[RMDB]
RNA sequence: GGGAACGACUCGAGUAGAGUCGAAAAGCAACCGCGGUCUGAUCGUGGUCUCGCCGCACGAACUGCACGGCGGUGACACGUCGCAACCGUGGACGUACUACCUGCGCCGAGACCUGCGCGCGCUGCUCGACUGCGACUGGCUGGUCAUGCUGACCGGUAACGGACAGCAUUUCGAUGCUGUCCGUUAAAAAGAAACAACAACAACAAC
Reactivity to 2A3 in 0.01 (KOAc 150mM, MgCl2 10mM, bicine 150mM(pH8.5), 24C), signal-to-noise 4, nucleotides 027 to 156: g030c010a010a050c030c000g020c040g020g060u070c110u190g030a140u140c040g040u050g030g100u000c020u010c010g000c000c020g070c000a060c080g090a230a070c090u140g010c030a010c050g040g000c010g010g030u020g030a010c040a020c080g060u050c020g020c070a050a040c010c000g010u020g020g000a000c040g040u030a050c030u060a030c000c020u020g010c000g010c020c030g050a070g020a110c040c010u070g010c020g000c010g010c020g010c050u010g010c000u030c050g070a060c030u050g020c020g070a050c030u030g050g010c020u040g000g000u010c010a040u170g050c060u080g020a020c020c000g030g000
Reactivity to DMS in 0.01 (KOAc 150mM, MgCl2 10mM, bicine 150mM(pH8.5), 24C), signal-to-noise 2, nucleotides 027 to 156: g020c020a040a140c020c000g070c030g000g010u000c060u010g010a080u000c020g060u000g020g000u010c020u010c040g010c030c020g000c020a060c040g000a130a130c070u010g010c080a050c010g000g000c030g020g040u010g010a100c020a070c120g020u000c030g020c070a080a050c030c010g030u000g000g000a050c090g030u000a110c070u010a150c030c010u010g030c010g020c000c000g020a110g000a100c060c020u000g010c010g030c030g020c080g040c030u010g000c040u000c040g000a100c060u000g010c000g010a130c030u000g010g000c010u000g010g010u000c080a170u000g000c090u000g000a070c030c000g000g010
This 207-nucleotide RNA was probed chemically with 2A3 and DMS. Conditions: 150 mM KOAc, 10 mM MgCl2 and 150 mM bicine (pH 8.5), 24 C. The data come from the RNA Mapping Database (RMDB), library OK3TST.